[RMDB]
RNA sequence: GGGAACGACUCGAGUAGAGUCGAAAAUAAUUAACGCCCCCGCAAGCGAGGGCUUGGCUGAUCUUAAUGAGGCCAGGUGCGACGCGGGGGCAACAGCCCGGCCUCAGCGAGGUCCCCUCGGGAGGUGCGAAGCCAUGAGGUUCGCCUCAUGGCUUCGAAAAGAAACAACAACAACAAC
Reactivity to 2A3 in 0.01 (KOAc 150mM, MgCl2 10mM, bicine 150mM(pH8.5), 24C), signal-to-noise 3, nucleotides 027 to 126: u050a000a030u140u110a070a060c090g020c000c000c000c000c000g060c050a110a110g110c040g060a070g040g190g020c000u000u000g000g000c010u050g080a140u050c010u090u300a270a180u300g010a060g000g010c000c000a000g010g010u090g010c030g010a050c100g000c000g000g000g000g000g000c000a000a000c000a010g040c000c000c000g000g000c000c000u090c010a160g180c030g010a000g030g000u180c120c020c000c000u010c000g000g010g010a020g000g020u050g060
Reactivity to DMS in 0.01 (KOAc 150mM, MgCl2 10mM, bicine 150mM(pH8.5), 24C), signal-to-noise 1, nucleotides 027 to 126: u010a060a060u000u000a050a220c290g000c000c000c000c000c020g030c020a150a160g000c050g020a070g010g000g020c000u000u000g000g030c010u070g000a180u000c070u030u090a120a110u080g000a300g000g000c000c000a000g000g000u010g020c000g000a180c180g000c000g000g000g030g020g050c020a000a020c010a120g030c000c030c000g010g000c010c000u000c000a000g030c000g000a050g000g000u020c050c060c010c000u000c050g010g020g000a040g040g010u010g000